Source information:
The data come from the RNA Mapping Database (RMDB), library OK3TST. This 207-nucleotide RNA was probed chemically with 2A3 and DMS. The DMS profile rests on 10,145 reads.
RNA sequence: GGGAACGACUCGAGUAGAGUCGAAAAUUAAUUACGUGUAAAAAGAAAGAAAGAUGAGACACAAUUAAACCAACACAAGCUAAGCGUAACGCAUGAACAGACUUGUCUGAGUUAGGCAAAGAACACUCAAGUUCACAGACUGACCAGGAAAGAGUGAAAAAUAUCGUAAUUUCGAUUACGAUAUUUUAAAAGAAACAACAACAACAAC
Reactivity to 2A3 in 0.01 (KOAc 150mM, MgCl2 10mM, bicine 150mM(pH8.5), 24C), signal-to-noise 5, nucleotides 027 to 156: u070u040a010a040u070u100a080c080g020u040g020u070a070a140a050a030a060g080a050a130a020g060a080a090a030g050a080u100g030a020g030a040c020a010c010a050a030u110u090a100a070a040c060c040a050a040c030a010c020a100a020g020c030u070a060a030g010c010g090u090a100a010c080g000c040a070u080g020a060a020c030a020g090a080c030u040u040g030u070c020u010g070a070g080u030u060a010g030g000c030a090a040a070g020a020a000c030a020c040u140c060a100a100g000u030u030c040a030c010a030g050a020c010u020g020a010c000c010a010g030g000a030a060a010g070a030g050u090g030a050
Reactivity to DMS in 0.01 (KOAc 150mM, MgCl2 10mM, bicine 150mM(pH8.5), 24C), signal-to-noise 4, nucleotides 027 to 156: u010u000a070a100u000u000a070c070g030u000g010u000a060a100a080a110a110g000a100a100a150g010a100a060a120g010a100u000g000a130g020a120c060a130c030a070a120u000u010a080a090a100c060c010a060a070c070a070c060a070a100g020c040u010a070a130g030c020g010u010a030a060c090g030c040a060u010g020a060a070c050a130g010a080c060u000u000g010u000c010u010g020a130g030u000u000a020g030g030c020a030a100a090g010a040a040c030a100c170u000c160a090a150g010u000u000c020a070c070a190g000a090c030u000g010a040c020c020a080g010g010a010a020a080g000a090g020u000g010a010
For 2A3 the reverse transcriptase was SuperScript II with manganese.